[RMDB]
RNA sequence: GGGAACGACUCGAGUAGAGUCGAAAAGACAAAUGCAGCAAAUUAGGCUAAGCAGGAAAGGGACGGUAGCUCCUGGUGUCAGUUCAUACGGUGUGAUGCAUCUGCGUCGUGCACACAUGCACCCAAAGGUAACUUGUAGAUUCGUCUACAAGUUACCAAAAGAAACAACAACAACAAC
Reactivity to 2A3 in 0.01 (KOAc 150mM, MgCl2 10mM, bicine 150mM(pH8.5), 24C), signal-to-noise 7, nucleotides 027 to 126: g070a000c040a020a090a020u120g020c010a020g000c010a040a060a220u130u060a130g120g000c010u050a070a030g000c010a010g050g040a070a050a040g030g000g020a010c040g030g040u050a030g020c040u020c010c010u020g050g010u040g030u040c040a040g020u060u090c040a030u080a130c080g030g000u040g010u020g040a160u030g010c010a020u010c030u110g050c020g080u140c030g020u050g010c000a010c010a000c000a040u070g030c010a060c010c000c000a030a110a010
Reactivity to DMS in 0.01 (KOAc 150mM, MgCl2 10mM, bicine 150mM(pH8.5), 24C), signal-to-noise 9, nucleotides 027 to 126: g000a070c080a030a080a100u000g010c030a040g000c040a050a060a130u010u010a070g020g000c040u000a060a110g020c020a040g000g010a050a070a080g010g000g010a050c060g010g010u000a070g010c050u000c020c020u000g010g020u010g000u000c040a060g010u000u000c070a070u000a090c140g000g020u000g010u000g000a120u000g000c010a030u000c080u010g010c090g010u000c120g020u000g000c020a030c040a040c060a040u000g010c090a110c020c010c040a040a080a110
This 177-nucleotide RNA was probed chemically with 2A3 and DMS. The RNA was probed in 150 mM KOAc, 10 mM MgCl2 and 150 mM bicine (pH 8.5) at 24 C. The 2A3 profile rests on 18,019 reads. Source: RMDB library M2PK90, as collected in RNAgym. For DMS, 15,260 sequencing reads were counted.